[RMDB]
The record gives the reactivity of an RNA of 177 nucleotides to DMS. High DMS reactivity at an A or C suggests that its Watson-Crick edge is free. The RNA was probed in 150 mM KOAc, 10 mM MgCl2 and 150 mM bicine (pH 8.5) at 24 C.
RNA sequence: GGGAACGACUCGAGUAGAGUCGAAAAAAAGAUAUGGAUUUACGGGAGCGUUACGGUCGCGAUGAGAGAAUUCGGAAACGAAUUCUCGAGCGACGGUAACGCGAAGAACGUAAAUCCUAAGUCAAAACGUUAAUCGCUAGUUCGCUAGCGAUUAACGAAAAGAAACAACAACAACAAC
Reactivity to DMS in 0.01 (KOAc 150mM, MgCl2 10mM, bicine 150mM(pH8.5), 24C), signal-to-noise 1, nucleotides 027 to 126: a110a030a040g000a070u000a300u010g010g010a000u000u000u000a000c000g000g000g000a160g010c010g010u000u000a010c000g000g010u000c000g020c000g010a130u000g000a300g000a000g010a020a010u000u020c000g000g010a050a110a180c000g000a000a000u000u000c000u000c000g000a080g010c000g000a090c010g000g020u000a000a010c000g040c010g000a030a070g000a140a190c010g030u000a000a000a020u000c000c000u000a010a050g010u000c040a100a050a130a180